[RMDB]
RNA sequence: GGGAACGACUCGAGUAGAGUCGAAAAAAUAUGACACUUGAUAAAACAAAGGUUGUCUACCAAAUUUAUCCAAAAUCUUUUAAAGACACAACUGGCAAUGGUUUGGGAGAUUUUCGAGGGAUUAUUGGGACUAGCGAUUAUUCGUAAUCGCUAGUCCAAAAGAAACAACAACAACAAC
Reactivity to 2A3 in 0.01 (KOAc 150mM, MgCl2 10mM, bicine 150mM(pH8.5), 24C), signal-to-noise 2, nucleotides 027 to 126: a000a000u080a040u140g000a000c010a030c000u000u050g150a000u170a170a300a080a000c180a110a000a170g220g000u000u230g000u000c000u000a000c040c000a000a000a270u240u250u120a150u290c000c000a230a100a000a000u000c030u070u090u030u220a110a300a000g050a040c020a000c000a220a040c120u050g000g000c000a030a040u020g010g000u040u030u000g000g000g000a040g000a010u060u060u000u060c060g020a120g030g070g000a000u000u000a050u070u090g150
An RNA of 177 nucleotides, treated with 2A3 and read out base by base. For 2A3 the reverse transcriptase was SuperScript II with manganese. High 2A3 reactivity points to a flexible backbone, as in loops and unpaired stretches. Source: RMDB library OK1LIB, as collected in RNAgym.